Source information: Chemical mapping of a 177-nucleotide RNA with 2A3 and DMS. Source: RMDB library OK2TST, as collected in RNAgym. Values are in units of 0.01, from 0 to 300, in steps of 10. For DMS, 2,722 sequencing reads were counted. 2A3 adducts were read by reverse transcription with SuperScript II with manganese.
RNA sequence: GGGAACGACUCGAGUAGAGUCGAAAAGAACGCCUAAUGAACCGUGUGAAGAAGGAGCUCAUUUGGAAUAUUGUGCCGGAGUUUGACCUCAACCAAAUGAUCAAGCGCCAGGUGUCAGGUGGUCCGCAUAAAUAGCAGCUUUCGAGCUGCUAUUUAUAAAAGAAACAACAACAACAAC
Reactivity to 2A3 in 0.01 (KOAc 150mM, MgCl2 10mM, bicine 150mM(pH8.5), 24C), signal-to-noise 1, nucleotides 027 to 126: g020a070a020c040g000c000c010u090a120a080u080g070a020a000c000c060g030u070g020u060g200a090a110g030a070a030g070g010a040g000c030u000c020a000u060u020u020g060g020a140a060u080a080u220u230g040u070g110c060c050g030g010a000g030u060u110u130g040a070c010c030u030c010a030a080c050c010a000a000a090u070g000a030u080c020a070a000g000c000g000c070c040a040g000g040u060g000u040c020a010g000g030u050g010g060u040c030c050g020c000
Reactivity to DMS in 0.01 (KOAc 150mM, MgCl2 10mM, bicine 150mM(pH8.5), 24C), signal-to-noise 3, nucleotides 027 to 126: g000a070a110c120g010c020c020u020a100a110u010g020a070a060c020c020g010u000g010u010g010a100a120g040a190a120g030g010a100g010c060u000c020a040u000u000u000g000g000a120a130u000a080u000u010g010u030g020c060c040g010g000a070g010u010u010u010g010a100c060c030u000c100a070a120c050c050a010a020a040u000g010a040u000c130a090a090g010c040g020c030c030a070g030g010u000g000u000c060a020g010g030u000g000g000u010c020c030g000c140